Structure probing data (2A3 and DMS) for a 177-nucleotide construct. The reactions ran in a buffer of 150 mM KOAc, 10 mM MgCl2 and 150 mM bicine (pH 8.5), at 24 C. For 2A3 the reverse transcriptase was SuperScript II with manganese.
RNA sequence: GGGAACGACUCGAGUAGAGUCGAAAAGAUAUGGAUGGAGCUCAUAUGCGAAAUACUCGGAAACGAGUAUCAAGCAUACUAGAGCGUUGAAAUCCUAAGUCAAAAGUCUCUACUUCGGUAGAGACAACCUUCAUUAGAAGUUCGCUUCUAAUGAAGGAAAAGAAACAACAACAACAAC
Reactivity to 2A3 in 0.01 (KOAc 150mM, MgCl2 10mM, bicine 150mM(pH8.5), 24C), signal-to-noise 5, nucleotides 027 to 126: g030a020u100a040u170g000g000a010u010g020g030a010g010c010u010c010a010u010a000u020g000c010g030a070a020a000u000a000c010u000c000g020g030a070a070a050c010g000a000g000u010a000u010c000a020a020g000c010a000u000a020c050u130a170g010a000g000c000g020u040u020g000a020a020a000u010c000c000u020a170a030g070u040c040a030a010a020a200g000u000c000u000c000u010a010c000u030u090c300g130g010u000a010g000a000g010a010c000a000a000
Reactivity to DMS in 0.01 (KOAc 150mM, MgCl2 10mM, bicine 150mM(pH8.5), 24C), signal-to-noise 7, nucleotides 027 to 126: g010a030u000a300u000g000g010a020u000g000g000a140g020c000u010c000a240u000a010u000g010c000g010a220a150a020u010a000c000u010c000g000g010a110a110a230c000g000a010g010u000a000u000c010a060a300g000c010a000u000a000c200u010a070g000a010g010c000g020u000u000g000a110a100a030u000c000c000u010a070a140g000u000c030a060a070a110a120g000u000c000u000c000u000a010c000u000u030c160g020g010u000a000g000a010g000a000c010a030a020